[RMDB]
RNA sequence: GGGAACGACUCGAGUAGAGUCGAAAAUGAAAGUGAUCUUGAUCCCGAACGUGUUCAGGAGAUCUUCCACUCAUUCGACGGGGAUCAGGAAGAAAUCUUCCAGUCACUUAUCAGUGACGCCCUCGAUCAAGCAUCACUCAACCACACAGAAGGGGGCUGUUAACUGCAGGUUCGCCUGCAGUUAACAAAAAGAAACAACAACAACAAC
Reactivity to 2A3 in 0.01 (KOAc 150mM, MgCl2 10mM, bicine 150mM(pH8.5), 24C), signal-to-noise 1, nucleotides 027 to 156: u210g030a130a090a010g020u000g000a010u000c000u000u000g000a000u050c070c060c170g030a070a060c060g080u100g070u200u150c070a090g000g060a030g020a140u030c060u030u000c000c000a040c000u020c000a090u240u060c080g160a060c180g070g000g000g100a110u080c070a060g030g000a000a000g010a040a170a050u050c000u040u020c010c030a040g010u000c000a030c020u060u210a180u270c230a000g000u000g030a010c030g040c000c000c010u030c020g000a000u010c000a010a010g020c020a040u000c000a020c010u080c000a020a040c030c020a000c010a030c040a070g150a090a160g010g020g000g000g000c000
Reactivity to DMS in 0.01 (KOAc 150mM, MgCl2 10mM, bicine 150mM(pH8.5), 24C), signal-to-noise 1, nucleotides 027 to 156: u000g000a140a020a040g050u000g000a070u000c030u000u010g030a040u000c050c150c030g000a140a100c040g010u000g080u010u000c040a210g060g110a090g080a140u020c050u000u000c000c000a110c030u000c020a060u020u000c140g000a050c190g040g000g000g000a140u040c080a050g030g010a070a010g100a080a050a120u000c000u000u000c020c000a300g020u000c000a040c020u000u000a010u020c170a080g000u000g020a010c000g030c000c050c010u000c020g060a060u000c000a040a000g040c090a030u010c000a070c070u000c010a150a200c000c020a040c160a170c100a150g040a160a130g010g000g000g050g030c090

Chemical mapping of a 207-nucleotide RNA with 2A3 and DMS. It was measured as part of the RMDB library OK3TST. The reactions ran in a buffer of 150 mM KOAc, 10 mM MgCl2 and 150 mM bicine (pH 8.5), at 24 C. DMS adducts were read by reverse transcription with MarathonRT.